[RMDB]
RNA sequence: GGGAACGACUCGAGUAGAGUCGAAAAUGGGACACUGGUUCGGUUCCUCGGAUCGGUUCUGAUGUGGGCAUGUUUCUGAGCUGCCCAGUCCAAGCUGUGAGUAAUUAGUGUUGAGUUGAGCGAAGGCUUGGCUCAUGCAGGUUCUAGAGUCGGAGGGGAUUAAUACAUGCUUCGGCAUGUAUUAAUCAAAAGAAACAACAACAACAAC
Reactivity to DMS in 0.01 (KOAc 150mM, MgCl2 10mM, bicine 150mM(pH8.5), 24C), signal-to-noise 1, nucleotides 027 to 156: u000g000g030g010a040c010a040c060u020g020g010u010u010c040g000g000u000u000c060c040u000c000g040g030a060u000c000g020g040u000u000c030u000g030a110u000g000u000g010g010g010c040a090u010g020u000u000u000c150u020g010a190g020c030u000g020c020c020c040a070g010u000c000c040a080a160g040c020u000g010u000g000a160g010u000a050a100u000u000a100g000u000g040u000u000g000a060g010u000u010g010a010g010c010g010a250a190g010g010c020u000u000g010g010c020u010c020a020u000g020c040a080g010g010u010u000c020u010a100g000a090g010u000c050g010g000a120g010g010g010
Reactivity to 2A3 in 0.01 (KOAc 150mM, MgCl2 10mM, bicine 150mM(pH8.5), 24C), signal-to-noise 5, nucleotides 027 to 156: u080g020g030g010a020c030a010c090u050g010g040u040u030c030g030g030u110u080c020c030u040c040g030g000a040u020c020g000g020u070u050c050u070g090a100u080g020u100g080g000g010c070a080u160g060u030u100u110c110u220g090a050g020c020u010g010c020c000c000a000g010u010c000c010a050a000g010c030u030g030u070g090a050g030u110a110a120u110u090a060g030u090g050u100u070g020a010g010u000u020g020a020g010c050g060a120a030g160g000c000u020u000g020g000c000u000c010a010u050g000c010a010g000g070u110u000c030u080a040g000a010g070u060c030g010g010a030g000g020g000